[RMDB]
RNA sequence: GGGAACGACUCGAGUAGAGUCGAAAAGAUAUGGAUCUCGCAAGGGACUGAUGACCAGCCUCGGAAACGAGGCUGCAAGGUCGCUUGCGAGGAUCCUAAGUCAAACCAAGCACUUCGGUGCUUGGAAGAAUCGGUUAUGGUUCGCCAUAACCGAUUCAAAAGAAACAACAACAACAAC
Reactivity to 2A3 in 0.01 (KOAc 150mM, MgCl2 10mM, bicine 150mM(pH8.5), 24C), signal-to-noise 2, nucleotides 027 to 126: g010a020u100a020u190g000g000a000u020c000u000c010g000c010a010a000g120g080g000a000c010u050g160a300u110g010a110c050c000a010g000c030c010u010c000g000g000a020a090a060c020g000a030g000g030c010u000g010c020a070a090g020g010u000c010g060c300u000u000g000c000g010a020g020g000a000u000c000c030u010a160a000g080u020c060a030a040a170c000c000a000a030g000c010a010c000u050u140c300g130g000u000g030c000u010u020g000g000a010a030
Reactivity to DMS in 0.01 (KOAc 150mM, MgCl2 10mM, bicine 150mM(pH8.5), 24C), signal-to-noise 3, nucleotides 027 to 126: g010a050u010a300u000g000g010a000u000c000u000c000g030c000a020a010g000g000g010a000c000u010g010a110u030g040a140c300c010a000g010c000c000u010c010g030g000a100a120a210c010g000a010g000g020c000u000g010c010a030a050g010g050u000c000g000c000u000u010g000c000g000a020g020g000a000u010c010c000u000a060a150g000u000c020a130a140a230c000c000a000a010g000c010a010c000u000u000c160g020g000u000g000c000u000u010g000g000a040a060